[RMDB]
RNA sequence: GGGAACGACUCGAGUAGAGUCGAAAAGAAAGAAAGAAAGUUCAUUGUUUAUCGGAAACUUUAAACUAUAACCAUUCAAACUUUUCCAGAAGUUAGUUUGAAUAGAAAUUAAAAAGAAACUUCUAAAUAACCUUAUCAUGCUUCGGCAUGAUAAGAACGCUAAAUAGAUCUUCGGAUCUAUUUAGCGAAAAGAAACAACAACAACAAC
Reactivity to 2A3 in 0.01 (KOAc 150mM, MgCl2 10mM, bicine 150mM(pH8.5), 24C), signal-to-noise 1, nucleotides 027 to 156: g000a010a030a000g080a030a050a030g040a050a110a030g080u090u040c060a090u130u130g050u100u100u070a130u170c100g010g090a090a030a030c000u000u100u020a050a080a040c010u090a080u040a300a020c000c000a000u000u000c000a000a010a000c000u010u000u010u000c050c040a010g000a010a000g000u020u010a000g000u020u000u010g000a000a000u060a100g000a000a110a040u240u260a070a080a020a010a010g000a000a000a000c000u040u000c020u070a080a110a140u120a030a010c000c000u000u000a000u000c000a000u000g010c000u060u020c080g060g000c000a000u000g000a000u000a000a000g000a010a010